[RMDB]
RNA sequence: GGGAACGACUCGAGUAGAGUCGAAAAGGCUAGGUGGUAUUCCGGUGUGGGAUACUUGGUAAUAUGUAACGCUAAUUGCAUAAGAUUGUAGGAGGGAAUUUACAGUCUUGGUUUUUAUAAACCUGAAAAAAGGAAUUACACUUCGGUGUAAUUCCAACUGAUGAGUAUCGUUCGCGAUACUCAUCAGAAAAGAAACAACAACAACAAC
Reactivity to DMS in 0.01 (KOAc 150mM, MgCl2 10mM, bicine 150mM(pH8.5), 24C), signal-to-noise 1, nucleotides 027 to 156: g000g050c070u010a060g020g000u000g010g000u010a070u000u000c030c020g000g030u020g050u010g040g000g030a090u000a030c030u030u000g030g030u000a090a160u000a090u000g030u000a000a090c090g030c090u010a050a090u010u010g010c020a070u000a040a050g010a090u000u010g020u010a070g050g000a070g040g020g010a080a090u020u010u000a070c000a060g050u010c000u000u010g040g000u000u000u000u010u010a060u010a140a020a020c060c000u030g000a000a030a110a170a080a190g000g000a010a000u000u000a010c010a010c010u010u000c300g030g020u010g020u000a000a000u010u000c000c000a000a010
Reactivity to 2A3 in 0.01 (KOAc 150mM, MgCl2 10mM, bicine 150mM(pH8.5), 24C), signal-to-noise 5, nucleotides 027 to 156: g040g000c040u040a020g000g080u040g040g040u080a040u080u050c030c050g100g070u170g030u110g050g010g000a030u050a070c010u040u060g040g020u070a080a070u040a070u150g060u060a050a020c050g000c140u080a100a060u080u050g000c010a040u030a130a040g020a040u030u060g020u020a030g000g130a050g000g040g020a010a030u040u030u070a050c020a000g010u010c000u030u030g020g010u040u020u000u070u030a140u140a090a040a020c010c020u040g100a090a010a000a010a000a010g000g000a000a000u000u010a000c000a000c000u030u090c220g060g000u000g000u000a000a000u000u000c000c000a000a020